[RMDB]
RNA sequence: GGGAACGACUCGAGUAGAGUCGAAAAGCCUGCUGGGCCUGAGUACGUCGUCAUGAGGGCGGGCAGCGUGAUUGUGAUGCUUGUCCUUCUGGCUGCUGUCUGGUGGCAGACCGACCAGCUGAGCGAGGCCAGGACCCGCAACAAGCUGCUGACCGAAUACGCACAGAGAUUUCGAUCUCUGUGCGUAAAAAGAAACAACAACAACAAC
Reactivity to 2A3 in 0.01 (KOAc 150mM, MgCl2 10mM, bicine 150mM(pH8.5), 24C), signal-to-noise 1, nucleotides 027 to 156: g030c000c000u030g000c060u190g040g020g020c010c010u080g000a020g040u050a170c080g050u020c040g000u060c060a060u060g020a000g080g000g000c060g000g010g020c000a010g000c050g040u070g190a240u240u200g010u000g040a040u050g000c000u000u000g020u080c000c000u010u060c030u010g040g020c020u100g000c000u070g020u000c080u120g100g010u150g020g090c070a020g070a060c000c000g000a070c050c000a000g020c150u100g010a030g000c090g000a000g000g040c010c010a080g090g000a300c000c010c000g020c000a040a050c080a080a000g030c070u050g020c050u080g090a060c000c000g000a090a090